Structure probing data (DMS and 2A3) for a 177-nucleotide construct. DMS adducts were read by reverse transcription with MarathonRT. Reactivities are given for positions 27 through 126. The RNA was probed in 150 mM KOAc, 10 mM MgCl2 and 150 mM bicine (pH 8.5) at 24 C.
[RMDB]
RNA sequence: GGGAACGACUCGAGUAGAGUCGAAAACGCCUUGACGUGGUCAUUUGCCGGUGCGUGCAGGGUGUCGACGGCAUGUUGGCCGGACAGCAUGGCGAACAGGGCGCUGGAUUCCGCACGCUUGCGGGUGGUGAUGAGGAUGAUUCGUCAUCCUCAUCACAAAAGAAACAACAACAACAAC
Reactivity to DMS in 0.01 (KOAc 150mM, MgCl2 10mM, bicine 150mM(pH8.5), 24C), signal-to-noise 6, nucleotides 027 to 126: c080g010c010c020u000u000g010a190c100g020u010g020g010u000c050a060u000u010u000g010c040c020g000g010u000g010c030g020u000g020c040a090g020g000g020u010g030u000c030g000a100c020g010g010c010a030u000g010u010u010g020g020c010c020g020g000a120c100a100g000c090a040u000g010g000c010g000a090a140c070a050g000g000g010c030g010c050u000g000g000a150u000u010c010c020g020c040a100c190g010c140u020u000g000c040g000g010g020u010g010
Reactivity to 2A3 in 0.01 (KOAc 150mM, MgCl2 10mM, bicine 150mM(pH8.5), 24C), signal-to-noise 6, nucleotides 027 to 126: c030g010c010c000u030u050g060a070c100g090u130g040g020u070c020a080u020u050u180g020c000c000g050g050u120g050c040g010u060g060c040a130g080g110g060u120g050u050c040g070a080c020g020g030c020a030u080g050u100u080g110g000c020c020g010g020a020c020a020g080c030a050u080g030g000c020g000a020a020c030a040g020g060g000c030g000c030u040g060g040a090u130u030c010c000g010c010a010c040g180c010u100u190g140c040g000g020g020u110g060